An RNA of 177 nucleotides, treated with DMS and 2A3 and read out base by base.
For 2A3 the reverse transcriptase was SuperScript II with manganese.
DMS adducts were read by reverse transcription with MarathonRT.

[RMDB]
RNA sequence: GGGAACGACUCGAGUAGAGUCGAAAAUUAGCGUGACCACGAUGCGAUGAAAUCCUAGUUGAUGGGCGAGAGUGGCAAUCCGUUGGCUGGGGACGAGCAAAGUUAACUGCUGCACCCAUGGCAAGUAAUCGAUAAUUAUCUUCGGAUAAUUAUCGAUAAAAGAAACAACAACAACAAC
Reactivity to DMS in 0.01 (KOAc 150mM, MgCl2 10mM, bicine 150mM(pH8.5), 24C), signal-to-noise 9, nucleotides 027 to 126: u000u000a050g030c030g010u000g020a150c120c130a070c060g000a170u000g000c030g010a100u010g000a060a180a130u010c010c010u000a050g020u000u000g010a040u000g000g000g020c170g000a100g000a100g030u000g010g020c070a100a090u000c030c030g010u000u000g010g010c020u000g010g010g000g000a050c100g000a060g010c030a020a050a180g000u000u010a080a090c100u010g020c010u000g010c130a120c020c010c010a090u000g010g020c080a040a070g000u000a080
Reactivity to 2A3 in 0.01 (KOAc 150mM, MgCl2 10mM, bicine 150mM(pH8.5), 24C), signal-to-noise 5, nucleotides 027 to 126: u050u040a030g010c010g020u020g040a070c040c020a010c070g020a020u040g010c020g100a120u060g070a070a020a030u040c000c000u010a010g030u030u030g040a050u030g010g030g000c040g000a150g010a010g110u120g080g000c010a010a050u030c000c020g000u010u020g030g000c010u020g020g000g010g020a020c020g010a000g000c010a040a010a020g010u060u070a060a020c040u070g000c000u020g000c030a100c010c040c030a060u060g080g000c050a060a050g050u060a120